[RMDB]
RNA sequence: GGGAACGACUCGAGUAGAGUCGAAAAACGGUAUUAGUCUCAGUUCCUAGCUGACGGUUUGAGCCAAUCACGGUAAACAAAACCUUGCUUUCCUGUCUUCCUUGUAUGACAGAAGGGUUAUCAUUAACUUGUAUUUUCCGUUCGCGGAAAAUACAAGAAAAGAAACAACAACAACAAC
Reactivity to DMS in 0.01 (KOAc 150mM, MgCl2 10mM, bicine 150mM(pH8.5), 24C), signal-to-noise 2, nucleotides 027 to 126: a070c060g000g000u010a110u000u000a110g010u000c030u000c070a110g010u020u010c020c010u000a090g010c030u000g020a080c140g020g020u000u000u000g030a070g000c010c040a070a110u000c210a090c130g000g020u020a060a100a120c160a070a040a070a060c010c020u010u010g010c030u010u010u000c030c000u010g000u010c000u000u010c020c210u010u000g020u000a020u000g000a050c030a030g020a040a040g000g010g000u010u010a100u000c060a090u010u020a110a110
Reactivity to 2A3 in 0.01 (KOAc 150mM, MgCl2 10mM, bicine 150mM(pH8.5), 24C), signal-to-noise 1, nucleotides 027 to 126: a000c090g020g000u160a090u100u180a130g060u040c020u030c040a020g050u050u120c010c000u060a050g070c030u080g070a040c060g000g070u030u080u060g030a000g040c020c030a020a030u130c040a020c100g080g010u090a040a130a000c070a010a130a020a020c000c070u010u040g000c000u040u100u040c020c010u000g000u000c020u040u020c070c000u110u220g070u140a030u000g000a020c020a030g040a020a060g070g000g000u020u110a130u160c090a090u130u000a050a100